The record gives the reactivity of an RNA of 207 nucleotides to 2A3 and DMS. 2A3 is a SHAPE reagent: it acylates the 2'-hydroxyl of flexible nucleotides of all four kinds. 2A3 adducts were read by reverse transcription with SuperScript II with manganese. Values cover nucleotides 27 to 156. The reactions ran in a buffer of 150 mM KOAc, 10 mM MgCl2 and 150 mM bicine (pH 8.5), at 24 C. The data come from the RNA Mapping Database (RMDB), library OK3TST.
[RMDB]
RNA sequence: GGGAACGACUCGAGUAGAGUCGAAAAUUAGCAGCAGCAGCAGUUUCCUGUAUGUAGGCAAGGCAUGCAUUCCCAGGCAUCAUGGUCUUGCUCAGUUAAGUCUCCAGCCUGGUCCCUGUGGGUACCUGAGUUUAAACCUUGGACUUAAGCGCUAGGGCUUCACUUCAAUUUUCGAAUUGAAGUGAAGAAAAGAAACAACAACAACAAC
Reactivity to 2A3 in 0.01 (KOAc 150mM, MgCl2 10mM, bicine 150mM(pH8.5), 24C), signal-to-noise 4, nucleotides 027 to 156: u100u040a020g030c050a010g000c020a010g000c010a010g000c010a030g020u010u040u070c020c010u040g040u100a140u090g100u100a040g010g010c040a020a010g010g010c030a000u050g000c000a040u090u090c020c000c010a020g030g020c010a030u030c020a030u170g070g000u030c010u040u030g000c000u020c090a060g020u050u080a100a010g030u020c040u020c090c040a030g010c000c020u020g010g020u020c010c000c000u080g020u140g050g020g000u070a100c020c020u090g030a050g080u060u090u130a040a050a040c010c010u020u080g020g000a020c010u070u170a100a020g020c050g000c100u050a010g030g040g010
Reactivity to DMS in 0.01 (KOAc 150mM, MgCl2 10mM, bicine 150mM(pH8.5), 24C), signal-to-noise 1, nucleotides 027 to 156: u000u010a060g030c060a110g060c020a070g010c040a070g050c030a110g020u010u010u000c020c010u040g000u000a050u000g040u000a090g030g010c020a020a070g000g010c010a070u010g000c070a100u010u000c020c020c040a100g010g030c050a070u010c050a040u000g000g000u000c020u010u010g010c020u000c060a100g010u000u000a060a120g010u020c010u010c010c030a090g030c010c030u020g010g010u000c000c010c030u010g020u010g020g010g020u000a040c030c020u030g020a070g000u000u000u000a040a050a090c040c050u000u000g020g030a070c050u000u000a030a080g000c040g010c020u000a070g010g020g020